Annotation: This 177-nucleotide RNA was probed chemically with 2A3 and DMS. Source: RMDB library OK2TRN, as collected in RNAgym. 2A3 adducts were read by reverse transcription with SuperScript II with manganese. The DMS profile rests on 991 reads.
RNA sequence: GGGAACGACUCGAGUAGAGUCGAAAACGCGCAGGCGGCUGAGCGGGCCCAGACCGCGCUGGAGAACAAGGCGGCUGAGCUGGACAAUGCGCGGCACACGGAAGAGGACCUGCAGCAGCAGCACAUGACACGUCUUGAAGUUCGCUUCAAGACGUGUAAAAGAAACAACAACAACAAC
Reactivity to 2A3 in 0.01 (KOAc 150mM, MgCl2 10mM, bicine 150mM(pH8.5), 24C), signal-to-noise 2, nucleotides 027 to 126: c040g010c030g010c060a050g090g020c070g020g030c080u000g030a030g000c000g060g010g020c020c000c020a060g010a100c010c030g000c000g050c030u010g040g090a230g020a130a040c070a070a090g100g000c030g060g090c200u180g020a040g070c020u010g040g000a040c070a090a080u090g010c030g000c000g020g000c000a030c000a010c090g130g000a040a070g030a110g020g030a120c000c030u060g020c010a070g000c000a000g060c000a010g060c020a030c010a060u190g040
Reactivity to DMS in 0.01 (KOAc 150mM, MgCl2 10mM, bicine 150mM(pH8.5), 24C), signal-to-noise 2, nucleotides 027 to 126: c060g030c100g050c080a120g010g030c010g000g040c030u020g000a210g020c000g000g010g000c010c060c030a140g000a290c000c000g020c000g050c000u000g010g000a210g050a190a110c070a190a080g030g000c000g020g060c150u000g000a120g020c000u020g000g040a120c100a030a160u000g000c030g050c010g000g070c080a130c140a080c090g000g000a120a120g000a110g000g000a060c030c070u000g030c020a080g000c000a070g020c020a050g030c060a050c130a090u000g000
Notes:
The RNA was probed in 150 mM KOAc, 10 mM MgCl2 and 150 mM bicine (pH 8.5) at 24 C.